This 177-nucleotide RNA was probed chemically with DMS and 2A3.
Reactivities are given for positions 27 through 126.
For DMS the reverse transcriptase was MarathonRT.
It was measured as part of the RMDB library M2PK90.
The RNA was probed in 150 mM KOAc, 10 mM MgCl2 and 150 mM bicine (pH 8.5) at 24 C.
High DMS reactivity at an A or C suggests that its Watson-Crick edge is free.
[RMDB]
RNA sequence: GGGAACGACUCGAGUAGAGUCGAAAAAUACAGCGUAAUCGAGCGGAGGAAAACGGCACUCCGAAAAUCCGGUACGAUUAUGAUCCCACUGCGUCGACGCUUGAUGCAGAACCGGAUUGCCGAGGAACAUCAUACAACAAUUCGUUGUUGUAUGAUGAAAAGAAACAACAACAACAAC
Reactivity to DMS in 0.01 (KOAc 150mM, MgCl2 10mM, bicine 150mM(pH8.5), 24C), signal-to-noise 9, nucleotides 027 to 126: a080u010a100c210a090g010c020g010u000a050a060u000c020g020a150g010c030g000g000a060g000g000a060a050a080a130c040g010g010c050a070c070u000c020c020g010a030a050a030a040u000c000c000g010g010u000a110c090g010a050u000u000a050u010g000a080u000c000c010c010a290c020u000g000c010g020u000c010g010a130c200g020c180u000u000g000a020u000g010c000a020g000a120a060c070c000g000g010a030u000u000g010c050c010g000a120g010g010a100a160
Reactivity to 2A3 in 0.01 (KOAc 150mM, MgCl2 10mM, bicine 150mM(pH8.5), 24C), signal-to-noise 9, nucleotides 027 to 126: a000u160a020c070a030g050c020g060u070a060a070u100c050g030a040g110c030g030g020a030g010g060a070a150a040a060c010g010g000c020a010c040u020c000c010g020a060a020a000a010u000c010c000g020g040u070a070c060g040a050u090u070a070u210g090a050u040c010c000c010a030c010u010g000c000g010u020c010g040a110c110g050c250u070u190g010a010u020g000c010a000g020a050a010c010c000g000g010a010u000u040g010c010c010g010a030g040g040a050a030